Source: RMDB library OK2TST, as collected in RNAgym.
This 177-nucleotide RNA was probed chemically with DMS and 2A3.

RNA sequence: GGGAACGACUCGAGUAGAGUCGAAAAGGCGCCGCCGACAAUACGUGCGGCAUCUGAAAUCCGAACAGAUUACUCAGCAGCUUGUUCACGUAGCCACUCCAGCCGACCGCGACCGCUGCGGUGGCUACCCCCUUAGGGGAUUCGUCCCCUAAGGGGGAAAAGAAACAACAACAACAAC
Reactivity to DMS in 0.01 (KOAc 150mM, MgCl2 10mM, bicine 150mM(pH8.5), 24C), signal-to-noise 3, nucleotides 027 to 126: g010g040c180g020c000c010g030c000c010g000a170c160a210a160u020a120c040g000u010g030c010g020g010c000a000u000c000u000g000a060a130a140u000c080c040g010a060a070c130a040g000a140u010u010a060c030u000c020a100g000c080a040g000c070u010u020g020u000u000c020a070c100g010u000a040g000c000c000a020c020u000c230c000a040g010c050c020g000a110c110c050g000c080g010a110c080c230g000c040u000g030c300g000g000u010g000g000c000u000a030
Reactivity to 2A3 in 0.01 (KOAc 150mM, MgCl2 10mM, bicine 150mM(pH8.5), 24C), signal-to-noise 3, nucleotides 027 to 126: g030g020c020g000c020c000g000c000c010g070a050c100a230a240u210a300c060g070u170g050c010g000g020c000a010u020c000u000g060a030a050a110u010c040c020g010a040a020c010a040g070a100u140u100a060c020u030c060a070g000c000a000g030c140u100u130g040u120u060c050a030c080g020u020a000g010c010c000a020c010u020c000c010a010g020c000c040g090a120c050c040g110c050g090a090c030c070g020c030u040g000c020g010g020u000g000g000c000u000a010

For DMS the reverse transcriptase was MarathonRT. The RNA was probed in 150 mM KOAc, 10 mM MgCl2 and 150 mM bicine (pH 8.5) at 24 C.